[RMDB]
RNA sequence: GGGAACGACUCGAGUAGAGUCGAAAAGUCAGCUGUUUGUAAGUCCCGUAUUCAACUUGUGCCGCACAGGGCAGGUUGAGGGCCAGACACUGCGCUAUCCCGCAGGGCGACCGAUACACGGGUGUUCGCCCAUAUUCUUCUUCGGAAGAAUAUGGGCAAAAGAAACAACAACAACAAC
Reactivity to DMS in 0.01 (KOAc 150mM, MgCl2 10mM, bicine 150mM(pH8.5), 24C), signal-to-noise 2, nucleotides 027 to 126: g020u000c020a040g030c220u000g000u010u010u030g010u000a060a030g030u010c000c000c000g030u030a120u010u000c000a000a000c000u010u010g000u010g040c020c000g000c300a110c300a190g000g010g020c010a000g010g010u000u010g010a030g030g000g020c010c300a010g000a030c010a060c000u000g000c110g000c110u000a050u000c020c020c030g030c230a110g030g000g020c020g000a020c010c020g000a150u010a160c200a090c050g020g000g010u000g020u000u020c020
Reactivity to 2A3 in 0.01 (KOAc 150mM, MgCl2 10mM, bicine 150mM(pH8.5), 24C), signal-to-noise 2, nucleotides 027 to 126: g020u000c000a000g010c120u010g000u010u040u030g020u050a060a010g100u130c060c010c000g040u120a190u110u080c000a010a000c010u050u030g000u150g300c000c010g210c090a220c130a280g040g020g010c000a010g000g000u000u000g000a090g000g020g010c000c000a010g000a010c000a000c000u060g040c030g000c060u040a100u080c000c000c010g000c070a050g020g020g000c060g040a010c000c000g010a030u050a120c160a040c000g080g010g060u150g080u060u070c080
Structure probing data (DMS and 2A3) for a 177-nucleotide construct.
The data come from the RNA Mapping Database (RMDB), library RFMREP.
The RNA was probed in 150 mM KOAc, 10 mM MgCl2 and 150 mM bicine (pH 8.5) at 24 C.